[RMDB]
RNA sequence: GGGAACGACUCGAGUAGAGUCGAAAAGGCAUGGGUAGAAUGAGUAGUGCGAGCGCUUGUAAGGUGUCUUACACUCUUAAAACAGAUAUUCAUUCUUUGCCGCGCACUCUUGCAAUUAUUGAUGGUCACUAUUAGAACGUUUCGACGUUCUAAUAGUAAAAGAAACAACAACAACAAC
Reactivity to 2A3 in 0.01 (KOAc 150mM, MgCl2 10mM, bicine 150mM(pH8.5), 24C), signal-to-noise 8, nucleotides 027 to 126: g070g000c030a010u070g030g040g060u090a030g020a060a030u050g010a020g040u140a000g010u040g040c050g020a050g000c060g020c070u120u110g130u150a120a050g020g020u060g030u060c010u000u030a010c010a010c010u070c010u070u140a110a120a030a030c060a020g110a140u070a040u100u050c010a020u030u010c000u070u060u080g090c010c010g030c020g000c020a060c020u060c030u040u120g020c040a100a140u160u070a130u170u260g080a100u120g060g060u080c030
Reactivity to DMS in 0.01 (KOAc 150mM, MgCl2 10mM, bicine 150mM(pH8.5), 24C), signal-to-noise 9, nucleotides 027 to 126: g010g010c030a020u000g010g010g030u000a030g000a050a040u010g010a020g020u000a030g010u010g010c070g010a050g010c090g010c050u010u000g010u010a100a080g010g020u000g010u020c030u000u000a070c020a040c030u000c080u000u010a050a060a120a120c170a070g010a300u000a040u000u000c020a030u000u000c010u000u000u000g010c020c020g010c090g020c050a060c060u000c030u010u000g010c080a070a080u010u000a100u010u010g010a090u000g010g010u000c150